[RMDB]
RNA sequence: GGGAACGACUCGAGUAGAGUCGAAAAUAGCAGAGUGUGAUUAGGCAGAAGAAGGUGCAUCUCAGCACCUCCUUCUGUGUAAUGUGGAAAUGAGCAGCUAUUGUAGUGGGAAUGAGCAACUCCACAGUAAAGGCAUUAGGCUGUGCCAUCUGGGCAGCCGGAUUGCAGAAUUCGUUCUGCAAUCCGGAAAAGAAACAACAACAACAAC
Reactivity to 2A3 in 0.01 (KOAc 150mM, MgCl2 10mM, bicine 150mM(pH8.5), 24C), signal-to-noise 1, nucleotides 027 to 156: u210a010g020c020a020g020a030g030u110g040u100g050a080u030u120a130g190g000c010a000g000a010a000g000a000a010g000g000u000g010c000a110u130c170u100c260a010g000c000a000c000c000u000c000c000u000u010c000u030g000u020g020u040a010a030u060g000u100g050g030a000a040a020u080g010a050g040c040a000g020c060u100a130u100u100g120u060a050g000u030g000g020g050a050a150u120g040a100g010c020a040a040c020u020c030c000a040c040a030g120u140a030a090a040g050g000c050a000u040u040a060g030g000c020u020g020u090g050c010c000a040u050c080u100g000g000g100c010a000g040

Source: RMDB library OK3TST, as collected in RNAgym.
An RNA of 207 nucleotides, treated with 2A3 and read out base by base.
The RNA was probed in 150 mM KOAc, 10 mM MgCl2 and 150 mM bicine (pH 8.5) at 24 C.
For 2A3 the reverse transcriptase was SuperScript II with manganese.
Reactivities are given for positions 27 through 156.